[RMDB]
RNA sequence: GGGAACGACUCGAGUAGAGUCGAAAAGUACAACUUACAAUUGUGGUAAGCGUAUUACCGGUGGAGUUCUUAUGUGUGAUUAAAUACUUGUAUUUUUUCAUAUGUUCCUCCUAUUUAAAACCUGCAUUCCUCAAUAAGUGUUCGCACUUAUUGAGGAAAAAGAAACAACAACAACAAC
Reactivity to 2A3 in 0.01 (KOAc 150mM, MgCl2 10mM, bicine 150mM(pH8.5), 24C), signal-to-noise 1, nucleotides 027 to 126: g030u020a010c020a130a040c070u040u050a000c020a120a290u250u200g120u190g230g010u000a010a000g000c020g010u050a020u030u100a070c000c020g090g020u060g030g000a000g010u070u010c010u030u040a030u010g020u000g000u010g020a010u040u010a010a010a000u050a030c070u080u130g040u070a000u010u010u000u000u000u010c000a000u010a010u100g020u000u000c000c010u000c000c000u080a220u010u140u110a040a070a060a070c020c010u010g040c010a070u000
Reactivity to DMS in 0.01 (KOAc 150mM, MgCl2 10mM, bicine 150mM(pH8.5), 24C), signal-to-noise 1, nucleotides 027 to 126: g000u000a030c030a150a080c010u000u000a030c040a110a270u010u000g030u020g010g000u000a000a000g020c180g000u000a040u000u010a180c030c030g000g020u010g020g010a010g000u000u000c030u000u000a020u030g020u000g010u000g000a000u000u000a010a050a020u000a030c040u010u010g020u000a010u010u000u000u000u000u000c000a000u000a020u000g020u000u000c050c020u020c020c000u000a120u000u010u010a100a100a060a110c100c080u000g030c130a130u000
Overview
An RNA of 177 nucleotides, treated with 2A3 and DMS and read out base by base. The RNA was probed in 150 mM KOAc, 10 mM MgCl2 and 150 mM bicine (pH 8.5) at 24 C. The 2A3 profile rests on 959 reads.